[RMDB]
RNA sequence: GGGAACGACUCGAGUAGAGUCGAAAAAGCACGUGCCAUGGGCGAUGGGCGAUGGGCGUUUUGCGAUGGGUUCACAAUUGGGUUCGCAUCGGGUUCUUCACGUGUUGGUCUCCGGUGUUAAAAAUAAUAUGAUAUAGGUAUUCGUACCUAUAUCAUAAAAAGAAACAACAACAACAAC
Reactivity to 2A3 in 0.01 (KOAc 150mM, MgCl2 10mM, bicine 150mM(pH8.5), 24C), signal-to-noise 8, nucleotides 027 to 126: a000g050c020a010c030g030u050g050c040c010a090u080g030g050g010c040g080a100u070g030g040g000c050g040a060u060g030g030g000c050g020u060u060u090u130g040c030g020a040u050g060g050g010u090u100c050a030c030a180a150u160u160g120g010g010u060u050c030g000c050a030u020c000g000g000g040u060u010c000u050u060c030a020c040g060u080g030u050u060g050g010u010c050u010c030c010g010g000u030g020u070u100a100a150a010a000a010u250a080a040
Reactivity to DMS in 0.01 (KOAc 150mM, MgCl2 10mM, bicine 150mM(pH8.5), 24C), signal-to-noise 8, nucleotides 027 to 126: a050g010c030a040c040g010u020g010c100c060a080u020g010g010g010c060g010a070u010g000g000g000c050g010a080u010g010g010g010c050g010u010u010u020u020g010c050g010a050u010g010g010g000u000u010c050a050c080a130a110u040u030g010g000g000u010u010c040g000c060a050u010c040g000g000g010u010u010c070u010u010c040a040c050g010u000g010u000u000g000g020u010c040u010c030c050g010g010u000g000u010u010a010a040a140a060a050u030a060a140
Description:
Structure probing data (2A3 and DMS) for a 177-nucleotide construct. Source: RMDB library OK1LIB, as collected in RNAgym. High 2A3 reactivity points to a flexible backbone, as in loops and unpaired stretches. DMS adducts were read by reverse transcription with MarathonRT. For DMS, 35,188 sequencing reads were counted.